This 177-nucleotide RNA was probed chemically with 2A3 and DMS.
[RMDB]
RNA sequence: GGGAACGACUCGAGUAGAGUCGAAAACAGCUUUGUUGAGGGGCAAGGUCUUAAUAGGGCCUGGAAUCACAGCAUUGAAACCCGAAGCCGGUCGAUCUAUUCCUGAGCAGGAUGAAGUCGCUCUUACCUACAGUGGUUAGUUCGCUAACCACUGUAGAAAAGAAACAACAACAACAAC
Reactivity to 2A3 in 0.01 (KOAc 150mM, MgCl2 10mM, bicine 150mM(pH8.5), 24C), signal-to-noise 1, nucleotides 027 to 126: c010a010g030c010u080u050u050g020u030u040g030a090g000g010g020g000c050a090a000g000g020u000c040u060u150a150a130u150a280g000g030g000c000c010u000g040g020a030a000u010c010a030c010a030g030c010a030u030u060g010a100a060a070c060c000c000g020a030a000g100c140c000g010g030u070c000g020a020u000c050u140a060u080u060c010c020u050g120a050g100c100a030g010g040a010u050g040a020a010g010u020c000g000c010u000c000u040u090a070c010
Reactivity to DMS in 0.01 (KOAc 150mM, MgCl2 10mM, bicine 150mM(pH8.5), 24C), signal-to-noise 3, nucleotides 027 to 126: c210a160g000c020u000u000u000g010u000u000g010a080g020g000g000g030c050a150a040g010g000u000c030u020u010a090a110u010a160g020g010g000c000c010u000g000g000a110a110u000c040a060c070a030g000c040a030u020u000g000a070a130a150c040c000c000g020a080a110g000c120c120g000g000u010c020g000a040u010c020u000a150u000u000c010c040u000g010a140g000c100a050g000g010a080u000g000a130a190g000u000c070g010c090u000c020u000u000a110c240

Reactivities are given for positions 27 through 126. The data come from the RNA Mapping Database (RMDB), library RFMREP.